This 177-nucleotide RNA was probed chemically with 2A3 and DMS. The reactions ran in a buffer of 150 mM KOAc, 10 mM MgCl2 and 150 mM bicine (pH 8.5), at 24 C. For 2A3, 90,132 sequencing reads were counted. For DMS, 131,630 sequencing reads were counted. For DMS the reverse transcriptase was MarathonRT.
RNA sequence: GGGAACGACUCGAGUAGAGUCGAAAAGGUGCUCUUUGUUUGAGCGUCGACGCAUGUUUCCCUACGGUGCAGAGACAGUUCACCGAUUUAAGGCUCGUGCUAACGAUGUAGGGUACGUCAUGCGGAAGGGAUCGAUUAGCUUCGGUUAGUCGAUCCCAAAAGAAACAACAACAACAAC
Reactivity to 2A3 in 0.01 (KOAc 150mM, MgCl2 10mM, bicine 150mM(pH8.5), 24C), signal-to-noise 9, nucleotides 027 to 126: g010g000u020g000c000u020c010u040u120u110g160u070u090u090g010a000g000c000g000u000c000g000a010c000g000c000a000u010g030u010u070u080c000c000c000u010a010c020g070g010u090g020c030a020g020a020g040a130c030a080g050u130u230c070a100c090c050g040a080u050u080u260a110a040g050g000c010u010c060g140u080g020c030u070a110a060c070g060a060u180g010u010a010g010g000g010u040a040c080g090u050c000a000u000g000c000g000g020a080a160
Reactivity to DMS in 0.01 (KOAc 150mM, MgCl2 10mM, bicine 150mM(pH8.5), 24C), signal-to-noise 9, nucleotides 027 to 126: g010g000u000g010c000u000c000u010u010u010g010u000u010u020g000a010g010c000g020u000c010g010a120c010g000c000a000u000g010u010u020u010c000c000c000u000a020c010g010g020u010g010c040a080g000a060g000a080c100a110g000u020u010c100a140c110c080g000a120u020u030u040a120a130g010g000c020u000c020g010u020g010c020u020a080a150c150g010a100u050g010u000a010g000g000g010u010a030c270g010u010c010a010u000g010c010g000g010a110a070